[RMDB]
RNA sequence: GGGAACGACUCGAGUAGAGUCGAAAAAGCGACAUGAGGCCAUCUGCGCUCAUGUGCUGAAUCCAAUCGUUCGGUGGUUUAGGUUCUGUACCCAUUCCAUGGCGGCGGGAACGGGUAUAAUCGAAAUACUAAUGUUCCUGUUCGCAGGAACAUUAGUAAAAGAAACAACAACAACAAC
Reactivity to 2A3 in 0.01 (KOAc 150mM, MgCl2 10mM, bicine 150mM(pH8.5), 24C), signal-to-noise 1, nucleotides 027 to 126: a000g060c040g130a020c000a000u000g020a020g070g000c060c030a200u110c170u220g020c210g000c040u020c000a000u020g000u000g000c000u000g030a010a020u000c010c000a010a080u060c020g100u120u030c040g000g080u050g100g000u030u060u120a080g000g060u100u060c050u090g000u040a030c000c000c010a010u020u040c030c000a070u070g090g000c020g000g030c040g040g020g000a020a020c040g020g010g030u040a010u030a030a050u050c050g030a070a070a040u040
Reactivity to DMS in 0.01 (KOAc 150mM, MgCl2 10mM, bicine 150mM(pH8.5), 24C), signal-to-noise 3, nucleotides 027 to 126: a010g000c000g040a040c000a010u010g000a030g010g030c010c250a190u010c170u010g020c070g010c010u000c010a010u000g010u000g000c010u010g010a100a180u000c040c030a090a080u010c100g010u000u010c050g020g020u000g010g000u000u010u000a070g020g020u010u000c100u000g030u000a050c010c010c020a090u000u010c020c020a060u020g030g010c030g010g000c060g000g000g000a020a020c070g010g000g010u000a010u000a040a080u000c070g020a040a100a110u010